The record gives the reactivity of an RNA of 177 nucleotides to DMS. The DMS profile rests on 595 reads. DMS adducts were read by reverse transcription with MarathonRT. It was measured as part of the RMDB library M2PK90.
[RMDB]
RNA sequence: GGGAACGACUCGAGUAGAGUCGAAAAUUAAAGGAGGAGGAGGAGUGUGUGUCUUCCCAGCUGCUGAGUAGAACCUCCGCACACACGCGAAAGCUACGAGCAGCAGCUGUGCGGAAACGGUGAAAAAGGUCCUCACUGGAUUCGUCCAGUGAGGACCAAAAGAAACAACAACAACAAC
Reactivity to DMS in 0.01 (KOAc 150mM, MgCl2 10mM, bicine 150mM(pH8.5), 24C), signal-to-noise 1, nucleotides 027 to 126: u010u010a040a080a040g010g000a100g000g020a080g030g020a020g030g020a110g000u020g010u000g000u010g000u050c070u020u000c020c000c000a030g040c020u020g050c010u000g030a210g020u000a050g010a040a060c090c020u000c180c010g010c010a100c080a120c300a120c190g000c020g000a020a250a080g000c000u000a000c030g030a060g000c000a050g000c000a010g000c020u000g000u020g020c050g000g020a040a010a080c090g020g000u000g000a040a050a120a090a060